[RMDB]
RNA sequence: GGGAACGACUCGAGUAGAGUCGAAAAAUAGGCUCUCCAACCCAACUCCUACUCAAUACGUCCUCGUCGUACAGAACGGUAACAUGUUUUCCGAACAUCCGCCCUUGGGUAUACGAGUAUACACCUUACAGCACCACUUACUUCGGUAAGUGGUGAAGCUGUUGUCUUUCUUCGGAAAGACAACAGCAAAAGAAACAACAACAACAAC
Reactivity to 2A3 in 0.01 (KOAc 150mM, MgCl2 10mM, bicine 150mM(pH8.5), 24C), signal-to-noise 2, nucleotides 027 to 156: a000u150a020g040g030c020u010c000u010c060c000a050a090c010c000c000a000a090c020u030c010c020u000a030c000u040c020a070a060u090a130c060g080u070c030c000u060c000g070u030c040g010u070a020c050a130g110a090a040c000g020g010u090a040a000c030a080u040g040u040u070u080u080c050c020g030a030a000c020a070u080c060c000g040c030c020c000u050u060g040g010g000u020a020u050a040c020g000a010g020u010a010u020a010c140a090c010c000u050u160a070c030a110g040c010a010c020c000a010c010u000u000a000c000u020u040c050g090g000u010a010a010g000u000g010g000u000g000a000a000